An RNA of 177 nucleotides, treated with DMS and 2A3 and read out base by base. The RNA was probed in 150 mM KOAc, 10 mM MgCl2 and 150 mM bicine (pH 8.5) at 24 C. For 2A3 the reverse transcriptase was SuperScript II with manganese. For 2A3, 8,910 sequencing reads were counted.
RNA sequence: GGGAACGACUCGAGUAGAGUCGAAAAUAUACAUCAGAAGUCGGCACAACUCCCGACUCGCGGUGAGCGAUGCAGCGUAGCCCCUGCUACGCAGCUGCUGUGCGGAUGGCUAGCAAAAGCUAGCCUAAUAUAUACCCAGUUUCGACUGGGUAUAUAUAAAAGAAACAACAACAACAAC
Reactivity to DMS in 0.01 (KOAc 150mM, MgCl2 10mM, bicine 150mM(pH8.5), 24C), signal-to-noise 9, nucleotides 027 to 126: u040a100u040a160c040a030u010c020a100g000a140a040g000u000c000g000g000c280a140c100a110a150c280u030c110c000c000g000a040c030u000c020g000c300g000g020u010g000a090g010c110g010a090u020g010c020a040g020c000g010u000a020g000c020c080c080c120u030g000c000u000a010c010g020c000a030g020c000u010g010c050u010g010u020g010c070g000g000a090u010g010g010c000u000a000g010c000a120a070a100a140g000c000u000a010g010c000c000u000a010
Reactivity to 2A3 in 0.01 (KOAc 150mM, MgCl2 10mM, bicine 150mM(pH8.5), 24C), signal-to-noise 8, nucleotides 027 to 126: u140a000u030a020c030a040u070c010a020g070a180a010g100u010c010g030g080c130a040c040a300a300c150u050c000c000c000g020a020c010u010c020g010c040g000g040u090g040a020g010c030g110a150u150g010c010a010g010c010g000u020a010g010c020c020c010c100u130g000c000u010a010c010g000c010a020g000c010u030g000c010u030g030u090g060c020g070g050a060u100g020g000c000u000a000g000c000a130a170a270a050g000c000u000a000g000c010c000u000a010